[RMDB]
Conditions: 150 mM KOAc, 10 mM MgCl2 and 150 mM bicine (pH 8.5), 24 C. This 177-nucleotide RNA was probed chemically with DMS and 2A3. For DMS, 1,345 sequencing reads were counted.
RNA sequence: GGGAACGACUCGAGUAGAGUCGAAAAUCGACUUCCUUCGGGAAGUCGAAAAUAACGGUCGGCUCAUGAAGCAAGUCGAACAUGCUGCUCGACCUAGACUAAAAAGAAUCUCGUUCGCGAGAUUCAAUCCUUGCUUUAUGUUCGCAUAAAGCAAGGAAAAAGAAACAACAACAACAAC
Reactivity to DMS in 0.01 (KOAc 150mM, MgCl2 10mM, bicine 150mM(pH8.5), 24C), signal-to-noise 2, nucleotides 027 to 126: u000c010g000a010c010u000u000c000c000u010u000c160g030g010g000a010a000g010u000c000g000a010a000a050a100u000a140a150c200g020g000u000c010g020g000c000u010c020a050u000g000a060a260g000c030a100a030g030u000c100g000a100a160c020a030u000g020c180u000g000c020u010c000g000a000c020c010u000a070g000a160c120u010a060a070a120a090a040g000a000a000u000c000u000c000g010u010u010c150g010c020g030a000g000a000u000u000c000a120a110
Reactivity to 2A3 in 0.01 (KOAc 150mM, MgCl2 10mM, bicine 150mM(pH8.5), 24C), signal-to-noise 1, nucleotides 027 to 126: u020c000g020a000c000u020u000c030c000u040u040c120g100g000g000a000a000g010u000c000g000a000a000a000a000u050a040a040c050g000g000u000c000g000g000c000u000c010a000u010g020a040a010g040c100a100a060g300u280c030g020a030a090c000a000u040g040c060u010g020c050u080c180g010a000c000c000u000a030g040a020c040u060a020a040a000a040a060g010a010a000u000c000u020c000g040u030u040c200g000c000g080a000g000a020u020u010c000a000a020

2A3 adducts were read by reverse transcription with SuperScript II with manganese. For 2A3, 1,378 sequencing reads were counted.